RNA sequence: GGGAACGACUCGAGUAGAGUCGAAAAUAAAAUCGUAGGGCGAGACGAUCGACGUAAAUCGCUCAAUCUACUCGAGACCAAAGGAAUACGCUUCGGUAACUCGCUCUAAUCCCGAGCGAUAAAUGAACUAUCUGCACAGUUUCGACUGUGCAGAUAGAAAAGAAACAACAACAACAAC
Reactivity to 2A3 in 0.01 (KOAc 150mM, MgCl2 10mM, bicine 150mM(pH8.5), 24C), signal-to-noise 1, nucleotides 027 to 126: u080a000a040a000a060u010c000g000u020a080g000g010g020c000g000a020g000a030c010g020a030u120c100g040a060c030g020u050a000a060a150u070c040g000c070u030c020a010a060u030c020u000a030c020u030c030g030a040g030a000c010c010a120a010a000g130g010a230a050u090a080c030g000c060u010u060c020g020g000u020a060a050c040u000c040g000c000u020c000u030a020a010u000c010c010c000g000a000g020c000g040a060u080a060a130a070u150g050a040a030
Reactivity to DMS in 0.01 (KOAc 150mM, MgCl2 10mM, bicine 150mM(pH8.5), 24C), signal-to-noise 1, nucleotides 027 to 126: u020a120a110a140a110u020c010g030u000a110g070g010g000c070g020a020g000a040c040g010a120u000c040g030a080c080g000u000a030a040a060u000c060g000c110u000c080a050a140u000c010u000a000c070u000c030g020a050g010a100c000c040a030a070a000g000g020a050a110u000a030c060g000c080u000u010c070g000g030u000a100a060c130u000c000g010c000u000c000u000a070a130u030c100c020c010g050a050g000c020g000a100u020a060a030a120u000g000a140a100